[RMDB]
RNA sequence: GGGAACGACUCGAGUAGAGUCGAAAAGAUAUGGAGCCAUGAACCUGUAUUCGACGUUGAAAUCGGAAACGAUGGAGUCGAUACGCGGAGCAUGGCUCCUAAGUCAAAACCGUGGUUCGCCACGGAAUCCAAACAGGUAGUUCGCUACCUGUUUGGAAAAAGAAACAACAACAACAAC
Reactivity to DMS in 0.01 (KOAc 150mM, MgCl2 10mM, bicine 150mM(pH8.5), 24C), signal-to-noise 2, nucleotides 027 to 126: g020a040u000a300u000g010g000a000g030c000c000a000u000g000a030a030c000c010u010g000u000a010u020u000c000g000a010c000g000u000u000g000a080a100a030u000c010g000g000a200a090a180c020g000a030u010g000g000a070g010u000c000g010a020u000a000c000g020c120g000g000a080g040c000a000u000g000g000c000u000c000c000u000a000a060g010u000c040a090a070a100a130c010c000g030u000g000g000u000u010c220g030c000c010a000c000g000g000a050a050
Reactivity to 2A3 in 0.01 (KOAc 150mM, MgCl2 10mM, bicine 150mM(pH8.5), 24C), signal-to-noise 2, nucleotides 027 to 126: g010a000u060a050u180g020g030a010g000c010c010a000u020g000a030a050c030c020u000g030u010a030u090u300c030g000a000c020g200u300u040g050a030a050a000u000c020g020g070a060a020a030c010g010a010u000g000g010a020g000u000c000g010a030u000a010c030g070c210g010g010a010g050c010a000u000g000g000c000u000c000c000u000a000a000g010u020c000a000a000a060a060c000c020g000u010g000g030u130u090c190g030c080c000a000c000g000g040a010a060